[RMDB]
RNA sequence: GGGAACGACUCGAGUAGAGUCGAAAAGUUUGGUUACUUCUGUUGGUGAUUCUAGUGAAAUCGCCACUAAAAUGUUUGAUUCCUUUGUUAAUAGUUUCGUCUCGCUGUAUAAUGUCACACGCGAUAACCUAGACAUAAGGUUCGCCUUAUGUCUAGGAAAAGAAACAACAACAACAAC
Reactivity to DMS in 0.01 (KOAc 150mM, MgCl2 10mM, bicine 150mM(pH8.5), 24C), signal-to-noise 2, nucleotides 027 to 126: g030u000u000u000g010g010u010u000a110c070u000u010c100u000g000u000u000g030g030u000g020a000u010u000c030u000a150g000u020g000a170a010a020u000c000g040c020c000a030c030u000a050a100a090a040u000g010u020u010u000g000a230u000u000c020c000u000u000u000g020u000u000a090a110u000a160g020u000u010u000c030g020u000c130u000c030g020c010u000g000u000a140u010a100a130u010g010u000c130a040c020a050c210g010c020g000a050u000a090a230
Structure probing data (DMS) for a 177-nucleotide construct. For DMS the reverse transcriptase was MarathonRT.